[RMDB]
RNA sequence: GGGAACGACUCGAGUAGAGUCGAAAAGAUGGGGCCGCUCGUGUUCAAGAUCCGCAAGUACAACGGCGCGCUGAUCUACAUCGGUCACGACGAGAGUUCGAUCCAUCCGCUCCUGUGGCGCGUCGGCAUAAUAUGAGCAGUUCGCUGCUCAUAUUAUAAAAGAAACAACAACAACAAC
Reactivity to 2A3 in 0.01 (KOAc 150mM, MgCl2 10mM, bicine 150mM(pH8.5), 24C), signal-to-noise 6, nucleotides 027 to 126: g030a020u050g000g000g030g020c040c010g010c060u040c040g050u040g040u090u130c090a060a020g010a060u040c030c020g030c110a090a040g060u060a090c060a190a060c100g020g000c010g000c000g000c020u040g030a060u010c020u070a050c010a100u100c040g000g010u030c010a020c090g050a000c010g020a030g000a010g190u130u210c050g020a070u020c020c000a030u010c020c020g030c040u040c000c010u090g040u120g040g000c010g000c000g020u020c020g000g000c010
Reactivity to DMS in 0.01 (KOAc 150mM, MgCl2 10mM, bicine 150mM(pH8.5), 24C), signal-to-noise 9, nucleotides 027 to 126: g010a050u000g010g010g020g020c060c040g010c300u000c040g020u000g010u010u010c130a090a100g010a050u000c030c130g020c130a080a130g020u000a070c300a080a110c030g010g000c020g010c040g010c020u000g000a040u000c070u000a060c100a080u010c050g010g000u000c050a100c120g000a040c030g010a100g000a140g000u010u000c070g010a120u010c020c030a050u000c030c030g000c110u000c010c010u000g020u000g000g000c010g010c020g010u000c010g010g000c210

The record gives the reactivity of an RNA of 177 nucleotides to 2A3 and DMS. 2A3 adducts were read by reverse transcription with SuperScript II with manganese. It was measured as part of the RMDB library OK2TRN. DMS adducts were read by reverse transcription with MarathonRT. The reactions ran in a buffer of 150 mM KOAc, 10 mM MgCl2 and 150 mM bicine (pH 8.5), at 24 C.